[RMDB]
The record gives the reactivity of an RNA of 207 nucleotides to DMS and 2A3. The RNA was probed in 150 mM KOAc, 10 mM MgCl2 and 150 mM bicine (pH 8.5) at 24 C. Reactivities are given for positions 27 through 156. For DMS the reverse transcriptase was MarathonRT. The 2A3 profile rests on 1,064 reads.
RNA sequence: GGGAACGACUCGAGUAGAGUCGAAAAUUGCGGAUCUGGAAUCGCAAGCCGCCGCUCUUGGCAAAACAAAAGCCGAAUUGCUGGAAAUGAAAGCGGCGCAACUUGGCGUAAGUGCUCAGGCAGCGCCAUUCAUUGCACAGCUUAAAGCGCAAGAAAACCGAAGUUUAAAGUUCGCUUUAAACUUCGGAAAAGAAACAACAACAACAAC
Reactivity to DMS in 0.01 (KOAc 150mM, MgCl2 10mM, bicine 150mM(pH8.5), 24C), signal-to-noise 1, nucleotides 027 to 156: u000u000g030c000g000g000a210u020c020u000g020g010a110a230u010c030g090c030a070a110g020c070c020g000c010c070g000c020u000c030u030u000g000g010c040a110a090a210a210c030a080a090a110a000g000c000c040g000a180a230u000u000g010c030u030g030g000a110a030a020u000g000a000a030a090g000c090g010g050c000g090c000a050a020c000u000u010g000g050c060g010u000a150a170g020u020g020c010u010c030a060g050g000c050a180g000c030g000c000c000a180u000u010c010a040u000u000g010c040a100c000a070g020c010u000u000a030a030a100g000c000g010c060a110a110g040a040a100a090a160
Reactivity to 2A3 in 0.01 (KOAc 150mM, MgCl2 10mM, bicine 150mM(pH8.5), 24C), signal-to-noise 2, nucleotides 027 to 156: u060u030g010c000g050g040a060u070c120u220g080g030a130a080u110c040g000c050a060a030g020c020c010g010c020c000g000c000u050c010u100u090g050g030c020a020a040a120a050c060a080a180a070a040g030c000c000g030a060a060u120u050g000c000u000g020g000a060a050a040u010g020a030a020a030g200c120g020g000c010g020c000a010a060c020u000u030g010g000c050g040u070a140a100g110u150g250c030u070c140a020g030g000c130a010g000c010g010c000c000a000u010u000c000a000u000u020g030c180a020c010a110g000c000u010u030a040a070a020g010c040g020c040a050a030g140a060a150a040a000
2A3 adducts were read by reverse transcription with SuperScript II with manganese.